[RMDB]
RNA sequence: GGGAACGACUCGAGUAGAGUCGAAAAGCGGCCAAUAGGAGAAGAUGUAGAACAGCUAUAGCGGAAGUAUUCGAUGUAGAGUGACCGUUGUUUGGGGCCGGCCGCUAUUAGUUCGCGGGGCUUCCAGCUGGCUGUCUAGGUUCGUCUGGACAGUCGGAAAAGAAACAACAACAACAAC
Reactivity to DMS in 0.01 (KOAc 150mM, MgCl2 10mM, bicine 150mM(pH8.5), 24C), signal-to-noise 9, nucleotides 027 to 126: g010c040g010g000c010c030a110a090u030a080g000g000a080g000a070a070g010a060u010g000u010a070g010a090a100c100a080g010c030u010a050u010a040g010c020g000g000a060a100g010u030a070u010u000c030g000a060u020g010u010a040g000a090g010u010g000a110c060c060g010u010u000g000u010u010u010g020g000g000g000c040c050g010g010c000c000g000c010u000a040u020u020a100g010u010u020c130g000c070g010g000g000g010c020u000u010c010c020a090g000
Reactivity to 2A3 in 0.01 (KOAc 150mM, MgCl2 10mM, bicine 150mM(pH8.5), 24C), signal-to-noise 9, nucleotides 027 to 126: g020c020g020g010c000c010a090a110u120a120g050g070a070g010a090a040g040a040u120g040u150a040g030a160a030c020a030g030c020u050a020u100a120g060c040g020g040a080a030g070u090a170u080u100c050g040a060u140g070u150a040g020a040g090u070g030a040c030c020g010u020u030g020u010u050u090g020g000g010g000c020c010g040g020c010c000g000c010u000a030u050u110a040g110u050u090c050g000c010g030g010g000g000c000u140u040c010c000a010g010